This 177-nucleotide RNA was probed chemically with DMS.
For DMS the reverse transcriptase was MarathonRT.
The reactions ran in a buffer of 150 mM KOAc, 10 mM MgCl2 and 150 mM bicine (pH 8.5), at 24 C.
Reactivities are given for positions 27 through 126.
It was measured as part of the RMDB library TTRDEL.

RNA sequence: GGGAACGACUCGAGUAGAGUCGAAAAGAUAUGGAGACGACACAGAGAUCCUCGGAAACGAGAAGAUCGACGAAGUGUCUUUGGUCUCCUAAGUCAAAAGAGCUAAUCUCUUCGGAGAUUAGCUCAAUCAAUAACGUCGCUUCGGCGACGUUAUUGAAAAAGAAACAACAACAACAAC
Reactivity to DMS in 0.01 (KOAc 150mM, MgCl2 10mM, bicine 150mM(pH8.5), 24C), signal-to-noise 1, nucleotides 027 to 126: g030a060u010a300u000g000g000a020g000a060c000g000a040c000a000c030a060g000a170g000a020u000c010c000u000c010g000g000a030a090a240c010g000a000g000a140a140g010a010u000c010g000a180c260g000a070a070g000u000g000u010c000u020u000u010g010g030u000c010u000c000c000u010a020a160g010u010c060a040a040a120a130g000a020g010c010u000a010a000u000c000u000c000u000u040c160g000g010a010g010a020u000u010a010g000c000u000c000a010a000